[RMDB]
RNA sequence: GGGAACGACUCGAGUAGAGUCGAAAACGCGAUGGAUACGUCCAUCGCGAAUCCGCCCGAGCCGCGGUCGUUAAACUGUGGCACGGUUGUGCCUAGGUGCAACCCUGCUACUAAUGGCGGUACCCCUGCCCAAGCUACCGUCUACGGACGGUAGCAAGGGCAGGGCGCCAUUCGUGGCGCCCUGCCCAAAAGAAACAACAACAACAAC
Reactivity to 2A3 in 0.01 (KOAc 150mM, MgCl2 10mM, bicine 150mM(pH8.5), 24C), signal-to-noise 1, nucleotides 027 to 156: c020g000c000g000a030u010g000g010a010u010a000c250g130u050c000c000a000u010c000g010c000g000a000a000u020c010c020g000c010c070c020g060a040g060c050c000g040c070g000g080u070c060g020u030u110a100a200a090c070u080g000u010g040g020c000a000c000g030g000u010u010g000u030g000c040c010u130a200g130g000u030g010c000a010a000c020c010c020u030g010c000u010a010c010u030a060a110u130g030g010c010g000g000u100a080c000c000c000c030u020g050c060c000c000a060a020g000c000u010a010c000c010g010u000c000u000a060c300g070g000a000c000g000g010u000a000g000c010a000a000